[RMDB]
RNA sequence: GGGAACGACUCGAGUAGAGUCGAAAAACAGAAAAAAGGAGUUUAAAUUAGAUUUGCAAACGGACGGUACUAAAUACCGUUACUUUUACGUCUAACUUAUCGUUAACUCUGCAAAAAGAAAACAAGAAAAACAAGCGUGAGUUCGCUCACGCUUGAACGUUCUAGUUAUGUUCGCAUAACUAGAACGAAAAGAAACAACAACAACAAC
Reactivity to 2A3 in 0.01 (KOAc 150mM, MgCl2 10mM, bicine 150mM(pH8.5), 24C), signal-to-noise 3, nucleotides 027 to 156: a000c040a010g120a020a120a000a010a020a040g030g000a020g030u060u080u080a040a050a040u040u020a030g010a030u050u050u250g020c040a030a030a010c020g010g010a000c000g020g000u030a040c050u210a090a120a080u030a000c000c000g000u010u030a080c010u010u050u020u050a030c030g000u000c010u020a020a030c030u070u080a040u160c020g040u030u030a020a030c010u010c030u070g000c030a060a080a060a030a030g090a020a070a010a010c080a080a050g080a080a080a020a020a020c000a010a000g000c000g000u000g000a000g020u050u120c170g020c110u000c000a000c000g000c000u000u000g000a000a000
Reactivity to DMS in 0.01 (KOAc 150mM, MgCl2 10mM, bicine 150mM(pH8.5), 24C), signal-to-noise 2, nucleotides 027 to 156: a140c060a180g010a000a100a120a130a100a090g000g050a060g000u020u000u000a040a020a040u000u000a010g010a020u010u000u040g090c000a020a010a000c110g020g020a030c000g000g010u000a050c050u000a040a050a300u000a000c010c010g010u000u000a030c000u000u000u000u000a020c000g000u000c000u000a000a010c020u010u000a030u000c110g010u000u020a030a040c060u010c000u010g020c010a060a040a090a070a150g000a120a060a040a080c040a080a090g030a100a070a110a160a140c010a000a030g000c000g050u020g000a070g000u000u000c300g050c020u010c000a000c020g000c010u000u000g010a040a100
The record gives the reactivity of an RNA of 207 nucleotides to 2A3 and DMS. 2A3 adducts were read by reverse transcription with SuperScript II with manganese. The data come from the RNA Mapping Database (RMDB), library M2RFOK.